Chemical mapping of a 177-nucleotide RNA with DMS and 2A3. The data come from the RNA Mapping Database (RMDB), library OK2TST. For 2A3 the reverse transcriptase was SuperScript II with manganese.

RNA sequence: GGGAACGACUCGAGUAGAGUCGAAAAUGCUGAGCGGUUGGUGGCAAUCCGCAGCGCAGCACCAGAAGUGACAUUAAUUGUAGAUGCCAAUGAAUCCUGGCAGCCUGAGGGUUUAGCCGCGCGUUGCUAUAUAGUCCAACUUCGGUUGGACUAUAUAAAAAGAAACAACAACAACAAC
Reactivity to DMS in 0.01 (KOAc 150mM, MgCl2 10mM, bicine 150mM(pH8.5), 24C), signal-to-noise 7, nucleotides 027 to 126: u000g010c030u000g000a120g010c040g010g010u010u000g030g010u010g010g020c080a070a060u010c040c040g000c020a060g010c150g020c030a050g010c080a130c060c020a060g010a100a100g010u000g010a030c030a040u000u000a090a160u020u010g020u000a100g000a050u000g000c020c010a060a140u010g000a090a100u000c090c010u010g000g010c060a080g010c020c010u000g010a070g000g010g010u000u000u010a120g010c030c020g010c050g000c070g000u000u000g010c080
Reactivity to 2A3 in 0.01 (KOAc 150mM, MgCl2 10mM, bicine 150mM(pH8.5), 24C), signal-to-noise 3, nucleotides 027 to 126: u090g000c030u030g040a010g020c010g120g030u140u190g100g010u070g060g020c000a020a070u020c020c020g020c010a020g000c040g000c030a000g000c000a030c000c020a020g050a140a020g080u070g070a030c000a030u100u100a120a080u130u110g030u040a090g050a120u070g010c010c030a020a030u220g050a040a030u040c010c050u000g010g020c020a010g030c020c000u040g010a100g040g020g010u030u070u120a040g020c020c000g040c020g000c030g080u090u070g000c010